[RMDB]
The record gives the reactivity of an RNA of 207 nucleotides to 2A3. The 2A3 profile rests on 631 reads. The RNA was probed in 150 mM KOAc, 10 mM MgCl2 and 150 mM bicine (pH 8.5) at 24 C. 2A3 adducts were read by reverse transcription with SuperScript II with manganese.
RNA sequence: GGGAACGACUCGAGUAGAGUCGAAAAAGUGAUUGUCAUAUAGAACAGAAUCGCCGUGCAGUACGUUGUGGACGAAGCGGCUAAAACUUACACAACUCGCCCAAAGCACCCUGCCCUUCGGGUCGCUGAGGGUUAACUUAAUAGAAACGGCUAAGCAGGUUUACUCUUUCUUCGGAAAGAGUAAACCAAAAGAAACAACAACAACAAC
Reactivity to 2A3 in 0.01 (KOAc 150mM, MgCl2 10mM, bicine 150mM(pH8.5), 24C), signal-to-noise 1, nucleotides 027 to 156: a000g130u110g130a070u110u090g030u020c060a080u250a070u110a300g050a100a100c080a040g080a110a150u120c060g000c010c010g050u110g070c160a010g020u010a000c070g030u010u010g000u030g000g000a030c000g020a010a000g010c000g000g000c000u000a000a000a000a020c040u070u090a000c000a010c000a000a080c000u020c060g030c010c020c030a000a000a000g000c000a000c000c000c000u000g000c020c000c000u000u010c010g010g000g010u000c010g000c000u000g000a040g000g000g000u000u000a000a000c000u000u020a000a000u010a000g000a010a010a000c020g020g020c020u050a090a000g030c040a040